Chemical mapping of a 177-nucleotide RNA with 2A3 and DMS. As a SHAPE reagent, 2A3 marks flexible, mostly unpaired nucleotides at the ribose 2'-OH. Source: RMDB library RFMREP, as collected in RNAgym. Conditions: 150 mM KOAc, 10 mM MgCl2 and 150 mM bicine (pH 8.5), 24 C.
[RMDB]
RNA sequence: GGGAACGACUCGAGUAGAGUCGAAAAUCGAAAACGAUCCGGCGGCGGCCUGGGAGGGCCUUCACGCGGGUCCUCAAGGGGAGAACCACCGAUGGAGAAUACGCUCCUCAUCGGACUGUCGCGGCAGCUUUAUUUCAAAGUUCGCUUUGAAAUAAAGAAAAGAAACAACAACAACAAC
Reactivity to 2A3 in 0.01 (KOAc 150mM, MgCl2 10mM, bicine 150mM(pH8.5), 24C), signal-to-noise 2, nucleotides 027 to 126: u050c000g020a010a010a000a130c030g010a050u010c020c010g060g010c000g000g010c000g000g000c030c000u040g000g190g020a010g020g000g000c000c000u040u070c130a090c060g110c090g030g000g000u010c000c010u000c000a060a090g000g000g000g000a110g020a060a040c000c000a000c030c020g010a010u030g050g000a040g020a040a050u210a140c130g020c080u020c010c000u000c010a010u020c000g000g000a010c000u010g010u030c010g010c040g010g010c000a000g030
Reactivity to DMS in 0.01 (KOAc 150mM, MgCl2 10mM, bicine 150mM(pH8.5), 24C), signal-to-noise 4, nucleotides 027 to 126: u010c040g010a070a080a130a200c070g000a060u010c030c010g030g030c000g000g030c070g010g000c000c000u000g010g000g000a020g000g020g030c010c000u000u000c150a060c220g010c190g000g020g040u010c000c000u000c020a120a130g010g000g010g000a090g010a300a230c020c020a090c000c020g000a030u000g010g010a070g010a070a160u010a050c290g010c180u000c000c020u010c030a060u010c010g000g010a060c030u010g010u000c020g020c020g010g020c300a080g010